Overview: An RNA of 177 nucleotides, treated with 2A3 and DMS and read out base by base. Conditions: 150 mM KOAc, 10 mM MgCl2 and 150 mM bicine (pH 8.5), 24 C. For DMS the reverse transcriptase was MarathonRT. The DMS profile rests on 3,067 reads.
RNA sequence: GGGAACGACUCGAGUAGAGUCGAAAAAUAGUGUUAUUCGUAACACUAUAUAUGCGAACUCAAGGAUUCGUUCCAGAGACAUGCAUGCUAGCAUGAAAGCAACUGAACAAGCGUUCGCGCUUGUUAAACGGAUUCUAGAAUUCGUUCUAGAAUCCGUAAAAGAAACAACAACAACAAC
Reactivity to 2A3 in 0.01 (KOAc 150mM, MgCl2 10mM, bicine 150mM(pH8.5), 24C), signal-to-noise 3, nucleotides 027 to 126: a000u000a000g000u000g020u010u020a030u040u060c230g000u020a000a000c010a000c000u010a000u010a000u000a000u040g060c010g060a160a060c010u010c020a030a060g080g000a020u030u020c000g000u010u000c000c000a000g020a020g000a050c040a000u020g000c000a000u100g160c030u130a070g000c000a020u020g090a060a000a000g100c030a030a070c040u170g040a020a010c030a010a010g000c000g040u040u040c180g000c000g010c080u020u010g010u020u030a050a020
Reactivity to DMS in 0.01 (KOAc 150mM, MgCl2 10mM, bicine 150mM(pH8.5), 24C), signal-to-noise 4, nucleotides 027 to 126: a000u010a000g010u000g010u000u000a020u000u010c200g020u010a000a000c000a000c000u000a000u000a030u000a070u010g020c020g000a070a070c000u010c000a080a180g010g000a020u000u000c000g000u000u000c000c000a100g010a200g040a170c040a010u010g000c020a100u000g020c230u010a110g020c000a010u000g010a070a080a130g000c160a070a090c110u000g000a020a000c010a010a010g000c000g040u000u010c260g020c020g010c000u000u010g000u000u000a010a090
Reactivities are given for positions 27 through 126.